[RMDB]
RNA sequence: GGGAACGACUCGAGUAGAGUCGAAAAAAGAUCUUGGGGUUGCCCAACAAGCUUGUAGUAAGGGGACCAUGGUUAAAAAUGCAACAACAGAUGCAGCCGACAAGAUGUCGAAGGUUCUUGAACUCAGCAUUUUACGGGGGUUCGCCCCCGUAAAAUGAAAAGAAACAACAACAACAAC
Reactivity to 2A3 in 0.01 (KOAc 150mM, MgCl2 10mM, bicine 150mM(pH8.5), 24C), signal-to-noise 2, nucleotides 027 to 126: a000a000g080a030u030c010u010u050g000g000g000g040u090u140g170c020c000c000a000a000c040a040a040g070c060u080u110g030u010a010g010u050a060a160g020g040g000g000a000c020c000a060u090g050g050u080u060a070a060a070a000a000u070g030c000a020a020c000a020a000c020a130g020a100u080g000c000a010g000c000c000g000a020c000a080a090g080a200u150g100u050c050g010a130a000g030g020u000u000c000u020u030g010a070a020c030u010c020a030g010
Reactivity to DMS in 0.01 (KOAc 150mM, MgCl2 10mM, bicine 150mM(pH8.5), 24C), signal-to-noise 2, nucleotides 027 to 126: a050a060g000a020u020c010u010u010g020g000g000g070u040u000g000c030c000c010a150a100c230a090a060g000c120u000u000g000u020a030g010u010a110a220g010g010g020g010a030c000c020a040u020g010g010u000u040a010a040a060a060a130u020g010c030a040a040c070a130a110c260a080g000a150u000g000c000a020g000c090c000g000a050c040a060a130g000a080u040g020u010c040g010a060a090g000g020u000u010c040u010u000g010a190a050c060u000c150a140g000
An RNA of 177 nucleotides, treated with 2A3 and DMS and read out base by base. The reactions ran in a buffer of 150 mM KOAc, 10 mM MgCl2 and 150 mM bicine (pH 8.5), at 24 C. The DMS profile rests on 2,726 reads. DMS adducts were read by reverse transcription with MarathonRT.